[RMDB]
RNA sequence: GGGAACGACUCGAGUAGAGUCGAAAACGAUAGCUGUUCGCAGCUAUCGAAAGGACUACCCGUCAGGGUUAAGGCCAUACGGACAGCCGGGUCCAAUGCCGUAAAGAGGGUUGUUCGCAACCCUCAAGUGAUUAUUUCUGUUCGCAGAAAUAAUCACAAAAGAAACAACAACAACAAC
Reactivity to 2A3 in 0.01 (KOAc 150mM, MgCl2 10mM, bicine 150mM(pH8.5), 24C), signal-to-noise 8, nucleotides 027 to 126: c010g000a000u010a000g000c000u010g040u090u060c260g000c110a000g000c000u000a000u000c000g000a040a000a000g000g000a000c000u010a010c010c010c020g100u170c150a120g040g010g010u110u180a200a240g030g000c010c000a050u060a080c000g010g020a010c000a010g000c010c000g040g000g000u000c000c000a000a010u050g000c010c000g020u030a040a110a020g000a000g010g020g000u010u020g020u060u100c190g020c090a000a000c010c000c000u000c000a000a000
Reactivity to DMS in 0.01 (KOAc 150mM, MgCl2 10mM, bicine 150mM(pH8.5), 24C), signal-to-noise 6, nucleotides 027 to 126: c010g010a010u000a000g010c000u000g020u000u020c200g020c000a010g010c000u000a000u000c010g010a040a080a110g000g000a020c000u000a020c000c000c000g000u000c280a120g020g010g010u000u010a060a040g010g020c010c010a040u010a040c010g000g010a040c010a260g000c010c010g010g000g000u000c000c010a120a050u030g000c010c010g000u000a070a100a160g010a010g000g010g010u000u000g010u000u010c220g020c000a010a010c000c000c000u000c000a010a060

Source: RMDB library M2PK50, as collected in RNAgym. Structure probing data (2A3 and DMS) for a 177-nucleotide construct. In probing experiments dimethyl sulfate is read out at A N1 and C N3, which are open when not base-paired. For DMS the reverse transcriptase was MarathonRT.